[RMDB]
RNA sequence: GGGAACGACUCGAGUAGAGUCGAAAACGUAUUAGUAACUAAUCCAAAGCAAGUAUAGGAGAACAGGUUUUUAACUAUUUUUAGGCAGAUAAAAAAUAGUAUUUGACAGUCUAACACUAACUGAACACCACGCUCUCUUACUUCGGUAAGAGAGCAACUUCAGUCUCUACUUCGGUAGAGACUGAAGAAAAGAAACAACAACAACAAC
Reactivity to 2A3 in 0.01 (KOAc 150mM, MgCl2 10mM, bicine 150mM(pH8.5), 24C), signal-to-noise 2, nucleotides 027 to 156: c010g030u060a020u100u170a110g030u060a080a070c070u030a170a000u060c030c010a090a010a010g010c010a050a110g030u030a080u060a080g000g080a050g050a070a030c070a100g010g030u110u000u000u070u000a020a020c000u010a010u010u000u020u030u030a080g000g030c000a000g060a160u190a080a030a010a000a000a010u010a010g020u010a100u090u090u020g020a020c030a010g050u000c010u090a130a020c040a030c140u100a170a010c030u060g080a130a040c030a030c100c000a100c080g000c000u000c010u020c000u010u000a000c000u030u010c050g100g000u000a000a000g010a000g000a000g000c000a000a010

Conditions: 150 mM KOAc, 10 mM MgCl2 and 150 mM bicine (pH 8.5), 24 C. The record gives the reactivity of an RNA of 207 nucleotides to 2A3. For 2A3, 824 sequencing reads were counted. 2A3 adducts were read by reverse transcription with SuperScript II with manganese.